[RMDB]
RNA sequence: GGGAACGACUCGAGUAGAGUCGAAAAAUACUUCAGGGGAUUACCGGAAGAUUCUGCUGAAGAUCUGUGGUGGCAAUGACUGAACAGUGACUGGUGGCUCACUUCUGCCCACCUGCCGGCAACACCAGUCACAGUGUCAAUUCGUUGACACUGUGACAAAAGAAACAACAACAACAAC
Reactivity to DMS in 0.01 (KOAc 150mM, MgCl2 10mM, bicine 150mM(pH8.5), 24C), signal-to-noise 3, nucleotides 027 to 126: a090u000a120c010u000u000c010a050g010g000g010g010a030u000u000a130c050c070g020g010a100a140g010a030u000u000c000u000g000c020u000g000a030a020g010a090u000c070u000g010u010g010g020u000g010g000c030a070a050u000g010a060c200u000g010a050a040c100a100g010u000g010a020c030u000g000g010u000g000g000c150u000c120a060c120u000u010c120u010g030c070c000c040a080c140c070u020g000c100c070g020g000c070a040a070c020a040c040c060a050
Reactivity to 2A3 in 0.01 (KOAc 150mM, MgCl2 10mM, bicine 150mM(pH8.5), 24C), signal-to-noise 2, nucleotides 027 to 126: a000u080a080c000u000u010c010a000g030g000g000g000a010u000u080a090c060c090g060g040a050a040g020a010u040u000c030u080g270c010u020g000a010a000g060a090u000c060u120g070u060g060g020u020g010g000c030a030a080u080g060a070c030u060g040a100a010c000a080g010u010g030a020c020u030g000g000u010g040g000c050u070c080a070c020u150u060c050u060g000c000c010c010a050c020c030u020g020c020c020g000g000c020a040a010c000a030c040c040a010
The data come from the RNA Mapping Database (RMDB), library OK2TST. An RNA of 177 nucleotides, treated with DMS and 2A3 and read out base by base. The DMS profile rests on 2,842 reads.